[RMDB]
RNA sequence: GGGAACGACUCGAGUAGAGUCGAAAAUCUUCCUCUAGUUUCUUGAUCUUCUUCUUGGCCUUCCGGAGAUCCUUCUCGAGAUCAUCCACUAACUUUCUUGCAUUGACCCACUGCUCGAGGACUCCUUUAUUUUACAGUACUUCGGUACUGUAAAAUAAAAAGAAACAACAACAACAAC
Reactivity to DMS in 0.01 (KOAc 150mM, MgCl2 10mM, bicine 150mM(pH8.5), 24C), signal-to-noise 2, nucleotides 027 to 126: u000c140u000u000c010c040u000c130u000a130g010u000u010u000c020u000u000g000a160u010c030u000u000c010u000u010c040u000u010g030g000c060c040u000u000c050c050g000g020a120g000a060u010c040c050u000u010c050u010c070g000a100g000a070u000c040a040u000c030c010a090c110u010a070a090c070u000u000u010c030u000u010g000c120a100u000u000g000a080c030c030c030a120c050u000g010c000u000c000g020a030g010g010a080c090u010c000c020u000u010
Reactivity to 2A3 in 0.01 (KOAc 150mM, MgCl2 10mM, bicine 150mM(pH8.5), 24C), signal-to-noise 2, nucleotides 027 to 126: u020c010u020u000c000c000u010c040u020a040g070u050u060u030c030u040u100g050a070u050c010u070u020c000u030u020c000u070u040g120g040c020c000u050u060c080c010g000g000a020g000a030u040c000c050u110u070c030u050c070g140a140g030a060u000c020a070u020c040c010a030c040u060a100a060c010u110u130u000c010u040u070g050c030a080u050u080g010a020c020c000c010a050c050u010g000c000u020c020g020a010g000g040a050c000u030c000c000u020u040
This 177-nucleotide RNA was probed chemically with DMS and 2A3. Source: RMDB library 15KREP, as collected in RNAgym. Conditions: 150 mM KOAc, 10 mM MgCl2 and 150 mM bicine (pH 8.5), 24 C. DMS adducts were read by reverse transcription with MarathonRT.